[RMDB]
RNA sequence: GGGAACGACUCGAGUAGAGUCGAAAACGGUAAUGGAUGAAACGAACAAAAAAGCGCCAUUAAACAGCCCUGCACUGACCGGAACGCCAACGACGCCAACUGCGCGACAGGGAACGAAUAAUACUCAGAUCGCAAACACGGCUUUCGUUAUGGCCGCUGCAUACGCGUAAUUCGUUACGCGUAUGCAAAAAGAAACAACAACAACAAC
Reactivity to 2A3 in 0.01 (KOAc 150mM, MgCl2 10mM, bicine 150mM(pH8.5), 24C), signal-to-noise 1, nucleotides 027 to 156: c020g030g050u080a090a000u080g100g080a060u130g050a090a170a040c130g090a000a060c110a000a170a020a090a000a030g070c070g010c010c000a000u030u030a020a160a020c010a060g040c010c010c000u000g000c110a050c030u060g030a030c080c020g010g060a150a040c000g000c060c000a000a030c040g040a020c050g000c000c000a080a060c030u030g030c000g000c000g050a040c000a050g010g000g070a070a040c080g030a040a050u090a110a010u040a130c000u000c030a030g110a300u070c040g000c020a000a060a190c030a000c070g000g040c020u050u140u020c010g010u040u040a030u160g010g000c000c010g010c010
This 207-nucleotide RNA was probed chemically with 2A3.
The 2A3 profile rests on 421 reads.
Conditions: 150 mM KOAc, 10 mM MgCl2 and 150 mM bicine (pH 8.5), 24 C.
For 2A3 the reverse transcriptase was SuperScript II with manganese.